[RMDB]
RNA sequence: GGGAACGACUCGAGUAGAGUCGAAAAAUCAGAGGGCGCUAUCAUGCAAACUAGGAUUGUCUGCUCAUGCACAGAACCAACUACCGAUAACUAACAGUGCAUGAAGGUUCGUUAUUCCAUAUUAAUUAAAACUCGUAAUUCUUCGGAAUUACGAGAAGUAGUUCAACCACUUCGGUGGUUGAACUACAAAAGAAACAACAACAACAAC
Reactivity to 2A3 in 0.01 (KOAc 150mM, MgCl2 10mM, bicine 150mM(pH8.5), 24C), signal-to-noise 2, nucleotides 027 to 156: a000u020c000a000g000a020g080g000g000c000g090c010u070a130u280c060a060u180g040c000a000a000a020c110u020a040g010g010a050u020u020g000u020c020u110g050c020u000c060a000u000g080c020a030c020a020g080a200a040c080c010a070a030c140u230a160c000c140g110a140u130a150a050c060u020a030a010c020a070g010u000g020c000a000u000g060a020a010g020g010u080u170c020g020u090u040a010u130u100c030c000a020u100a130u230u280a090a090u040u180a030a030a170a140c000u000c000g000u000a000a000u000u000c000u030u020c150g080g010a000a000u000u000a000c000g000a000g000a000a000